Background
This 207-nucleotide RNA was probed chemically with 2A3 and DMS. Reactivities are given for positions 27 through 156.
RNA sequence: GGGAACGACUCGAGUAGAGUCGAAAAAGCCAGAUACGUUAAUACAACGAAAAUUAACAUGUUAACGUCGAAGUAAUAGUACGUACAAAGUUGCAACGAAGUAAAACGCUGGUCUCAAUAAUUGAGGUAUUAGUGGCACUGUUACGCCUCGAAUGAGCAUGAGUCUCCUUUUCGAAGGAGACUCAUGAAAAGAAACAACAACAACAAC
Reactivity to 2A3 in 0.01 (KOAc 150mM, MgCl2 10mM, bicine 150mM(pH8.5), 24C), signal-to-noise 4, nucleotides 027 to 156: a000g020c000c020a000g040a070u150a040c010g000u030u040a030a040u070a100c090a110a030c070g220a020a050a110a090u180u120a070a030c050a080u090g000u020u080a040a010c000g000u010c020g050a100a010g020u080a030a010u040a120g080u060a020c050g010u020a020c020a020a150a020g020u050u020g050c010a040a040c030g060a060a020g020u100a020a100a030a000c040g000c020u050g010g030u000c000u020c010a020a150u100a140a070u090u080g010a010g000g030u070a040u070u120a070g020u070g050g000c030a010c200u030g040u110u030a050c100g020c040c010u030c010g070a060a080u110g000a020g030
Reactivity to DMS in 0.01 (KOAc 150mM, MgCl2 10mM, bicine 150mM(pH8.5), 24C), signal-to-noise 2, nucleotides 027 to 156: a050g020c020c040a040g000a120u000a030c010g030u000u010a030a040u000a070c040a090a300c120g000a080a060a160a170u000u000a070a140c020a090u000g000u000u000a050a050c020g020u000c050g000a060a140g010u000a050a080u020a070g030u000a070c030g040u010a110c080a040a030a160g030u000u010g000c020a090a140c060g000a050a090g020u000a070a100a100a070c060g000c010u000g020g010u000c020u010c000a050a080u020a070a100u000u000g000a030g000g040u010a090u010u000a070g060u000g000g000c040a080c080u030g030u010u000a070c110g000c000c000u000c010g030a070a060u000g000a090g060
The reactions ran in a buffer of 150 mM KOAc, 10 mM MgCl2 and 150 mM bicine (pH 8.5), at 24 C.